[RMDB]
The record gives the reactivity of an RNA of 177 nucleotides to DMS and 2A3. It was measured as part of the RMDB library RFM100. Values cover nucleotides 27 to 126. 2A3 adducts were read by reverse transcription with SuperScript II with manganese.

RNA sequence: GGGAACGACUCGAGUAGAGUCGAAAAUUCCGUGGGCGGAGGAGUCCCCAGAUAGCUCAGGUCGGGGCGUCGGGGCAUUGAGCUCCCACAGCGUCAGGCAGGUCACCGAGGCUGCGCGGACUUGGGGGUACUUUCGAGUGUUCGCACUCGAAAGUACAAAAGAAACAACAACAACAAC
Reactivity to DMS in 0.01 (KOAc 150mM, MgCl2 10mM, bicine 150mM(pH8.5), 24C), signal-to-noise 1, nucleotides 027 to 126: u020u000c010c000g020u020g000g000g000c040g000g000a210g000g020a080g000u080c030c000c000c060a160g000a080u060a120g040c000u000c010a130g000g000u020c070g030g000g050g020c030g030u020c160g070g140g000g010c040a050u050u040g060a130g000c030u000c000c000c000a000c230a070g000c000g000u010c010a130g000g000c020a070g030g040u000c040a110c000c040g000a080g020g010c020u000g000c050g010c110g040g030a140c070u010u000g010g000g030g000
Reactivity to 2A3 in 0.01 (KOAc 150mM, MgCl2 10mM, bicine 150mM(pH8.5), 24C), signal-to-noise 2, nucleotides 027 to 126: u040u000c050c000g010u110g020g050g000c060g000g030a020g040g010a040g190u220c000c000c000c000a020g020a100u070a070g020c030u000c020a010g050g120u090c090g000g090g000g000c000g060u120c010g000g050g000g000c030a020u110u280g030a030g020c030u050c000c000c000a030c010a030g040c010g040u030c010a080g070g000c060a060g040g090u070c000a000c070c000g020a030g030g080c010u010g040c120g000c040g010g000a000c000u010u030g000g000g020g000